RNA sequence: GGGAACGACUCGAGUAGAGUCGAAAAUGUGACAUCCAUCACCCCACUGAUCUCCAGCGUUGAUUCAGCUGAUCAGUGGGCUGAGCAGGUGUCCCCUUUCUCCCUCACCAUUCCAUGUGCGUUCCUCGGUCGGGUGUGAUUUCGAUCACACCCGACCAAAAGAAACAACAACAACAAC
Reactivity to 2A3 in 0.01 (KOAc 150mM, MgCl2 10mM, bicine 150mM(pH8.5), 24C), signal-to-noise 1, nucleotides 027 to 126: u240g030u100g020a010c000a010u010c030c000a030u030c000a000c000c000c000c000a000c000u000g000a000u000c070u050c190c050a000g000c000g020u070u130g080a170u300u170c010a050g030c010u020g000a000u010c000a000g010u000g010g000g000c020u000g000a030g020c070a030g000g020u010g020u000c000c000c000c000u010u030u000c010u010c010c010c020u000c000a060c030c000a040u090u000c030c000a060u150g050u030g070c000g000u070u000c020c000u080c050